An RNA of 207 nucleotides, treated with 2A3 and read out base by base. Source: RMDB library RNAMAK, as collected in RNAgym. Values cover nucleotides 27 to 156. The 2A3 profile rests on 901 reads.
RNA sequence: GGGAACGACUCGAGUAGAGUCGAAAACUACUGUCACUUCGGUGACAGUAGAAAAAAACCUUUGUGUAGAAUCACAUCGAUCAUAGUGACCCAUUGGGUCACCUAUGGGAGUGACUACACUCUGGUAAAAACUCCGGAAGCUUCGGCUUCCGGAGAACCUUACUGCAUAGUUCGCUAUGCAGUAAGGAAAAGAAACAACAACAACAAC
Reactivity to 2A3 in 0.01 (KOAc 150mM, MgCl2 10mM, bicine 150mM(pH8.5), 24C), signal-to-noise 2, nucleotides 027 to 156: c000u010a000c000u000g000u000c000a000c020u070u100c300g130g000u000g000a000c000a010g010u030a010g000a020a000a000a000a000a000a020c010c020u030u020u020g010u000g010u000a040g040a300a200u020c010a020c030a150u180c090g120a060u080c000a010u000a000g000u000g010a000c030c020c070a300u150u300g020g000g010u000c000a000c010c070u020a000u010g000g000g000a020g020u000g020a010c000u010a000c000a000c000u010c000u000g010g050u120a140a040a000a130a090c010u000c000c000g010g000a030a000g010c050u130u180c300g160g000c000u000u000c110c000g000g000a010g000a000a010